[RMDB]
RNA sequence: GGGAACGACUCGAGUAGAGUCGAAAAUGCCGGAAGGUGCCCCUGGCCCAAUGCCAACACCGGAGAACUGCAUCACUCCGACGCCUACAGCCCAGUUUUCCAUCAAGGAGCUUGUGGCGCCCACGGGGAUUAUAGCAUCGUUCGCGAUGCUAUAAUCAAAAGAAACAACAACAACAAC
Reactivity to DMS in 0.01 (KOAc 150mM, MgCl2 10mM, bicine 150mM(pH8.5), 24C), signal-to-noise 5, nucleotides 027 to 126: u020g040c010c000g030g040a100a090g010g000u010g000c000c010c030c100u010g010g000c000c040c100a090a100u040g020c020c030a070a110c100a050c100c040g010g000a070g010a070a060c070u010g010c130a100u000c080a100c030u010c030c020g010a180c070g000c010c020u000a080c150a090g000c010c030c010a110g010u010u030u020u010c040c030a150u070c180a070a120g020g000a070g020c020u000u010g010u010g000g020c040g010c020c000c020a110c060g020g000g010
Reactivity to 2A3 in 0.01 (KOAc 150mM, MgCl2 10mM, bicine 150mM(pH8.5), 24C), signal-to-noise 9, nucleotides 027 to 126: u100g030c020c010g030g050a100a060g030g030u040g010c010c000c000c010u020g020g000c010c020c030a080a080u150g020c020c010a070a030c030a060c040c020g030g000a050g020a050a040c060u090g010c030a060u060c030a040c040u010c010c010g050a070c040g020c010c000u050a040c030a020g010c000c000c000a000g000u050u030u090u000c080c070a140u140c070a110a160g030g000a070g010c020u080u080g060u090g040g000c010g000c000c000c000a040c020g030g000g030
Conditions: 150 mM KOAc, 10 mM MgCl2 and 150 mM bicine (pH 8.5), 24 C. Structure probing data (DMS and 2A3) for a 177-nucleotide construct. For DMS the reverse transcriptase was MarathonRT. High 2A3 reactivity points to a flexible backbone, as in loops and unpaired stretches. For DMS, 7,565 sequencing reads were counted.